[RMDB]
RNA sequence: GGGAACGACUCGAGUAGAGUCGAAAACGACUUACCUUCGGGUAAGUCGACAUAGGUGAGUUCAUCGGAUAGCUGCCUAGGUGAGUUCAUCGGAUAGCUGCCACAUGUAACGGUUCGCCGUUACAAAGGAAAUUCAGUCAUUCGUGACUGAAUUUCCAAAAGAAACAACAACAACAAC
Reactivity to 2A3 in 0.01 (KOAc 150mM, MgCl2 10mM, bicine 150mM(pH8.5), 24C), signal-to-noise 1, nucleotides 027 to 126: c010g000a000c000u010u020a000c000c000u020u050c220g020g000g000u000a010a000g000u000c010g000a000c020a090u200a040g000g030u040g060a060g000u010u050c050a040u050c040g030g020a080u090a100g060c120u100g070c050c030u040a110g010g030u030g050a030g000u000u040c010a030u030c010g020g010a050u100a010g050c050u070g100c030c010a080c010a130u060g000u000a000a000c000g020g080u040u040c200g050c070c000g000u010u000a010c020a000a030a000
Reactivity to DMS in 0.01 (KOAc 150mM, MgCl2 10mM, bicine 150mM(pH8.5), 24C), signal-to-noise 1, nucleotides 027 to 126: c020g000a050c000u000u000a000c000c010u000u000c230g020g000g010u010a000a000g000u000c000g010a040c070a080u000a070g040g010u000g000a030g010u000u000c060a060u000c040g020g000a180u000a110g000c030u000g000c000c030u000a150g040g000u010g000a030g000u000u000c030a030u010c020g000g000a160u000a090g000c070u020g000c050c000a100c220a090u000g010u000a000a000c020g000g020u010u010c200g010c010c000g000u000u000a010c010a030a070a120